[RMDB]
RNA sequence: GGGAACGACUCGAGUAGAGUCGAAAACAUGGUACUUUUCGCGAACGCAUAUUCUGCGGAUUGGUUAUGGAACCGUUGUGUCUAUUUUCCGAAAUAUCGGUUGUCGGUAUAGAGGAUUUAUGCGUUAGGGUAUAACAUACUUCGGUAUGUUAUACCCAAAAGAAACAACAACAACAAC
Reactivity to 2A3 in 0.01 (KOAc 150mM, MgCl2 10mM, bicine 150mM(pH8.5), 24C), signal-to-noise 3, nucleotides 027 to 126: c030a030u050g010g060u300a290c010u020u000u000u000c010g010c040g030a030a020c030g000c120a010u020a060u050u070c100u220g000c010g000g050a050u010u120g000g050u120u090a080u110g080g030a000a040c000c000g030u000u070g100u000g020u020c030u090a200u100u060u050u040c020c010g010a000a050a000u070a020u020c030g050g120u180u180g300u300c000g030g010u020a000u010a000g050a000g010g020a000u000u060u000a050u020g020c020g010u020u140a030
Reactivity to DMS in 0.01 (KOAc 150mM, MgCl2 10mM, bicine 150mM(pH8.5), 24C), signal-to-noise 3, nucleotides 027 to 126: c050a060u030g000g030u040a070c020u020u000u020u000c010g010c030g000a020a030c060g040c060a020u040a060u020u000c060u050g020c030g000g020a010u010u000g000g000u000u030a090u010g000g000a090a130c020c040g000u000u000g040u000g000u020c050u000a070u020u000u000u000c000c000g000a270a170a010u000a030u000c050g010g030u010u040g000u070c030g000g000u000a000u000a010g010a300g000g010a030u010u010u010a010u000g000c030g000u050u010a260
An RNA of 177 nucleotides, treated with 2A3 and DMS and read out base by base.
For DMS, 5,333 sequencing reads were counted.
The RNA was probed in 150 mM KOAc, 10 mM MgCl2 and 150 mM bicine (pH 8.5) at 24 C.
Values cover nucleotides 27 to 126.
For 2A3 the reverse transcriptase was SuperScript II with manganese.
High 2A3 reactivity points to a flexible backbone, as in loops and unpaired stretches.